[RMDB]
Overview: An RNA of 177 nucleotides, treated with DMS and 2A3 and read out base by base. The 2A3 profile rests on 4,499 reads. The RNA was probed in 150 mM KOAc, 10 mM MgCl2 and 150 mM bicine (pH 8.5) at 24 C. 2A3 adducts were read by reverse transcription with SuperScript II with manganese.

RNA sequence: GGGAACGACUCGAGUAGAGUCGAAAAGAUAUGGACAAAGGGAGUCUACUCGUCCCGAAGAACAAUUCGUCGGAAACGACGAAUUGGGAGGGACACGCGAGUAGACAUCGAUCUUUGUCCUAAGUCACCCGUUAUAUGAGUUCGCUCAUAUAACGGGAAAAGAAACAACAACAACAAC
Reactivity to DMS in 0.01 (KOAc 150mM, MgCl2 10mM, bicine 150mM(pH8.5), 24C), signal-to-noise 2, nucleotides 027 to 126: g000a080u000a300u000g010g000a040c000a010a000a010g020g000g000a050g010u000c000u010a040c000u000c020g010u000c020c010c010g010a130a140g000a160a230c000a000a000u000u010c000g010u010c000g000g010a030a130a250c000g000a040c010g000a000a000u000u010g000g010g000a110g000g020g010a300c150a040c300g010c130g000a020g000u000a030g010a010c010a180u010c190g040a130u000c000u000u000u000g010u000c000c000u000a040a080g010u000c030a240
Reactivity to 2A3 in 0.01 (KOAc 150mM, MgCl2 10mM, bicine 150mM(pH8.5), 24C), signal-to-noise 2, nucleotides 027 to 126: g010a000u110a020u120g010g000a000c000a000a010a000g000g060g000a050g040u010c010u030a010c000u050c070g270u260c020c000c000g160a300a040g020a020a030c010a000a000u010u000c010g000u000c000g030g100a130a110a090c010g000a000c000g000a010a000u000u020g000g010g000a020g050g000g030a030c050a060c300g220c120g030a010g010u020a000g020a000c000a040u030c000g020a050u040c000u000u000u020g000u030c000c000u020a090a050g000u010c000a040